[RMDB]
RNA sequence: GGGAACGACUCGAGUAGAGUCGAAAACUCGUUCACGGUUAUGUCUGUCUCUGGCAGAGCAGACUGUCAGGAGGAGGAGGUCACCAUCUUCACGAAGCCAAAGCCAAAUUCCGCCUUGUCCUGUAAAACGACUAGUCGUAUUCGUACGACUAGUCGUAAAAGAAACAACAACAACAAC
Reactivity to 2A3 in 0.01 (KOAc 150mM, MgCl2 10mM, bicine 150mM(pH8.5), 24C), signal-to-noise 4, nucleotides 027 to 126: c010u020c010g060u170u100c100a050c060g040g060u050u170a090u170g080u010c010u000g130u050c000u000c000u100g150g000c070a010g000a040g000c010a010g000a020c010u010g030u010c000a070g000g100a030g010g020a010g000g030a020g020g010u040c010a030c050c030a070u050c030u080u090c060a030c040g020a040a000g020c020c020a090a020a030g010c010c000a030a090a080u050u010c020c010g020c010c040u020u040g080u030c010c000u020g050u140a100a070a010
Reactivity to DMS in 0.01 (KOAc 150mM, MgCl2 10mM, bicine 150mM(pH8.5), 24C), signal-to-noise 2, nucleotides 027 to 126: c000u000c000g020u020u000c020a090c150g030g000u000u000a090u030g020u010c000u000g000u000c020u000c000u000g000g000c080a090g030a040g030c040a000g020a020c000u000g030u030c100a050g000g020a050g000g040a160g000g020a130g010g010u000c120a090c080c070a070u010c050u000u000c090a070c180g000a110a120g010c090c060a060a090a090g000c050c070a020a100a170u010u010c000c020g010c000c040u000u000g040u010c000c020u000g050u000a010a050a090